[RMDB]
This 177-nucleotide RNA was probed chemically with DMS and 2A3. The reactions ran in a buffer of 150 mM KOAc, 10 mM MgCl2 and 150 mM bicine (pH 8.5), at 24 C. For DMS, 936 sequencing reads were counted. It was measured as part of the RMDB library OK2TRN. 2A3 adducts were read by reverse transcription with SuperScript II with manganese. For DMS the reverse transcriptase was MarathonRT.
RNA sequence: GGGAACGACUCGAGUAGAGUCGAAAAGGUAUCAUCGUGUACCGCGGAGCCUACUUUGGUCUGUACGACACAGCCAAGGGAGUGCUGUUCAAGGACGAGAAGACCGCCAACUUCUUCGCCAAGUGGGCCAGUCCACAGAUUUCGAUCUGUGGACUGGAAAAGAAACAACAACAACAAC
Reactivity to DMS in 0.01 (KOAc 150mM, MgCl2 10mM, bicine 150mM(pH8.5), 24C), signal-to-noise 2, nucleotides 027 to 126: g000g020u010a040u010c060a130u010c300g000u010g000u000a060c040c020g010c250g010g000a130g000c000c000u020a060c000u010u000u000g000g000u000c020u000g010u020a120c280g010a140c210a080c010a010g000c000c010a030a030g020g000g000a020g000u000g010c050u000g030u030u000c040a060a140g000g010a060c080g020a030g000a070a030g010a080c070c090g030c040c020a020a130c110u000u010c030u000u000c090g010c060c050a140a050g020u010g030g050g000
Reactivity to 2A3 in 0.01 (KOAc 150mM, MgCl2 10mM, bicine 150mM(pH8.5), 24C), signal-to-noise 1, nucleotides 027 to 126: g080g000u030a060u080c070a080u080c090g000u080g070u300a120c000c000g000c030g100g070a030g000c010c000u030a030c010u090u020u040g000g050u140c030u000g030u070a140c160g140a050c090a000c000a110g000c000c010a040a040g070g000g040a060g010u140g000c020u010g070u110u040c050a120a070g040g030a030c020g030a030g000a040a030g040a110c010c010g130c070c020a020a040c000u050u010c010u060u090c020g060c020c050a100a060g000u100g030g020g000